[RMDB]
RNA sequence: GGGAACGACUCGAGUAGAGUCGAAAAGAUAUGGAUGGUGGACAUGCUCGAGGAUCGGAAACGAUCCGAGAGCAACAGCCACGUCCUAAGUCAAAGAUCCAUGUUCAGUUCGCUGAACAUGGAUCAACUUGAAUAGUCUGUUCGCAGACUAUUCAAGAAAAGAAACAACAACAACAAC
Reactivity to DMS in 0.01 (KOAc 150mM, MgCl2 10mM, bicine 150mM(pH8.5), 24C), signal-to-noise 6, nucleotides 027 to 126: g010a040u000a300u010g000g010a010u010g030g040u010g000g010a040c080a180u000g020c000u000c000g000a300g000g000a000u000c000g000g000a080a060a160c000g010a010u000c000c000g000a300g000a020g000c000a010a010c230a080g010c010c000a010c000g000u000c010c000u010a060a130g000u000c020a070a080a120g000a010u000c000c000a000u000g000u000u000c010a010g000u010u010c250g010c000u000g010a010a010c010a000u000g000g000a000u000c000a020a040
Reactivity to 2A3 in 0.01 (KOAc 150mM, MgCl2 10mM, bicine 150mM(pH8.5), 24C), signal-to-noise 3, nucleotides 027 to 126: g020a020u080a060u160g010g010a030u090g300g110u020g010g000a050c040a130u080g000c000u000c010g010a040g000g000a010u010c000g000g020a080a060a040c010g000a000u000c010c010g000a000g000a000g020c010a000a010c000a000g030c000c000a000c000g000u010c000c000u030a150a030g050u020c030a040a060a150g010a000u000c010c000a000u000g000u000u010c010a000g010u020u100c230g030c190u010g010a000a000c000a000u000g000g000a000u000c000a000a000